Record summary: The record gives the reactivity of an RNA of 177 nucleotides to DMS and 2A3. In probing experiments dimethyl sulfate is read out at A N1 and C N3, which are open when not base-paired.
RNA sequence: GGGAACGACUCGAGUAGAGUCGAAAAGCCUCCACUGCGCCUGCCCUCCCUAAGGCAGGGCAUGGGCCACACGGCACCUUGCGGGGUGGGUGCCCGUCCCGGUAAGCCGUGGAGGCAAUGGGCCAGCAUUAAAAUUCGAGUUCGCUCGAAUUUUAAUAAAAGAAACAACAACAACAAC
Reactivity to DMS in 0.01 (KOAc 150mM, MgCl2 10mM, bicine 150mM(pH8.5), 24C), signal-to-noise 5, nucleotides 027 to 126: g000c000c000u000c000c000a020c020u010g010c000g020c010c010u000g010c000c010c020u010c080c050c140u000a110a150g010g020c110a000g000g010g000c050a030u010g010g010g000c240c100a080c110a070c180g010g000c000a020c020c010u000u000g020c060g010g000g010g020u000g010g000g010u000g000c030c000c060g000u000c040c050c040g010g000u010a130a160g010c010c060g010u000g000g000a030g010g010c000a010a010u000g000g010g010c040c030a120g010c140
Reactivity to 2A3 in 0.01 (KOAc 150mM, MgCl2 10mM, bicine 150mM(pH8.5), 24C), signal-to-noise 2, nucleotides 027 to 126: g010c000c000u000c020c010a010c010u020g000c030g040c010c000u020g010c000c000c010u080c050c000c010u110a130a090g030g020c040a010g000g020g010c010a010u090g000g000g020c040c000a060c010a020c040g010g000c010a030c000c020u030u160g030c040g020g030g010g010u020g010g020g010u070g000c020c040c000g030u040c000c030c010g020g010u060a030a000g010c000c010g010u010g020g010a020g010g000c000a000a060u050g000g020g000c000c010a010g030c010